[RMDB]
RNA sequence: GGGAACGACUCGAGUAGAGUCGAAAAUGAAAGUAGUCUCCUGGAGCGUCUGGGGUUUCCGUUGCAGUCCUCGGAACCAGGACCUCGGCGUGGCCUAGCGAGUUAUGGCGACGAAGGCCGUGAAAAACUAGCAUGAUAUCUUCGGAUAUCAUGCUAGAAAAGAAACAACAACAACAAC
Reactivity to DMS in 0.01 (KOAc 150mM, MgCl2 10mM, bicine 150mM(pH8.5), 24C), signal-to-noise 3, nucleotides 027 to 126: u000g000a120a070a130g020u000a070g010u010c050u000c010c030u000g010g000a190g000c170g010u000c020u000g000g020g020g010u010u010u010c060c070g000u000u000g020c120a110g000u010c040c030u010c040g000g000a030a080c040c030a260g000g010a020c090c000u000c010g010g010c050g020u010g020g000c020c010u000a140g000c050g010a060g010u000u010a090u010g000g020c020g010a110c040g000a110a060g000g000c010c030g000u000g000a040a030a080a120a130
Reactivity to 2A3 in 0.01 (KOAc 150mM, MgCl2 10mM, bicine 150mM(pH8.5), 24C), signal-to-noise 1, nucleotides 027 to 126: u150g040a040a030a010g070u130a010g050u050c020u000c070c020u070g060g010a040g060c050g030u020c010u060g180g000g000g000u040u130u000c030c020g040u070u120g030c060a040g070u100c010c010u000c000g020g020a040a070c010c000a020g050g000a000c000c010u020c000g010g010c020g060u050g000g000c000c000u000a020g020c020g020a010g000u110u100a120u160g080g040c020g030a110c060g030a100a020g040g000c000c030g000u070g100a100a100a000a000a010